Description:
Structure probing data (2A3 and DMS) for a 177-nucleotide construct. Reactivities are given for positions 27 through 126. The reactions ran in a buffer of 150 mM KOAc, 10 mM MgCl2 and 150 mM bicine (pH 8.5), at 24 C. As a SHAPE reagent, 2A3 marks flexible, mostly unpaired nucleotides at the ribose 2'-OH. 2A3 adducts were read by reverse transcription with SuperScript II with manganese.

RNA sequence: GGGAACGACUCGAGUAGAGUCGAAAACUGUGAGGCUUCGGCCUCACAGAUAGGUUUCUUUUUAGUGAUUUUUCCAAACGCCUUUGUGCAAAAAUCAUUAAACUCGCGUACGUUUCGACGUACGCAAAUAAUAGCAAACUUUCGAGUUUGCUAUUAUAAAAGAAACAACAACAACAAC
Reactivity to 2A3 in 0.01 (KOAc 150mM, MgCl2 10mM, bicine 150mM(pH8.5), 24C), signal-to-noise 1, nucleotides 027 to 126: c000u020g010u000g030a020g000g010c050u080u110c300g110g000c010c000u000c020a000c000a000g000a000u010a000g090g010u000u000u050c000u030u070u010u000u010a000g000u000g010a020u000u000u000u030u000c010c020a010a160a130c160g180c020c040u220u120u090g080u110g020c040a000a000a000a020a020u010c010a000u020u020a040a040a030c110u070c170g000c000g000u000a010c000g000u010u040u100c200g040a010c000g000u000a010c000g010c000a000a020
Reactivity to DMS in 0.01 (KOAc 150mM, MgCl2 10mM, bicine 150mM(pH8.5), 24C), signal-to-noise 3, nucleotides 027 to 126: c000u000g010u010g010a030g020g010c000u000u020c190g040g010c000c000u000c000a000c000a000g000a070u000a070g000g010u000u010u010c000u000u000u000u000u000a020g010u000g000a010u000u000u000u000u000c020c020a010a020a050c170g000c100c090u000u010u010g010u000g010c130a000a000a030a010a000u000c000a010u010u000a050a060a120c300u010c160g000c000g020u000a000c000g000u000u000u000c170g010a030c010g020u000a000c000g000c000a010a020